[RMDB]
RNA sequence: GGGAACGACUCGAGUAGAGUCGAAAAGUACACCCUCCCUCCCUCCCAAAAGCGCGCAAAUAAACGGAGGGACUCAGGGAUGAGUAGGCCAAAAGGCCAUAUCCCGAAGACGCGCGACGGGACAAAAGCUGGUGUAUAAAUUCGUUUAUACACCAGCAAAAGAAACAACAACAACAAC
Reactivity to 2A3 in 0.01 (KOAc 150mM, MgCl2 10mM, bicine 150mM(pH8.5), 24C), signal-to-noise 2, nucleotides 027 to 126: g000u040a060c020a150c100c020c000u040c050c000c010u000c000c010c000u010c030c000c000a070a100a020a010g000c030g000c020g000c020a080a060a160u240a110a140a010c040g020g000a010g010g000g000a000c010u000c040a010g010g040g020a020u040g000a010g050u240a140g060g000c020c000a090a300a090a180g010g030c040c010a050u080a050u100c000c000c000g000a040a030g080a020c030g000c000g000c010g020a010c010g010g000g010a030c020a030a140a010a030
Reactivity to DMS in 0.01 (KOAc 150mM, MgCl2 10mM, bicine 150mM(pH8.5), 24C), signal-to-noise 2, nucleotides 027 to 126: g040u010a130c150a080c030c010c000u000c010c000c030u000c000c000c060u010c000c000c040a060a080a160a280g000c010g030c000g050c050a050a110a140u000a090a170a140c120g010g000a250g000g030g000a030c060u000c070a060g010g010g000a110u000g010a030g000u010a140g000g040c000c000a070a070a090a080g010g020c000c020a050u000a130u020c000c000c020g000a300a200g020a100c060g000c000g030c030g010a170c110g000g010g000a060c110a080a070a140a160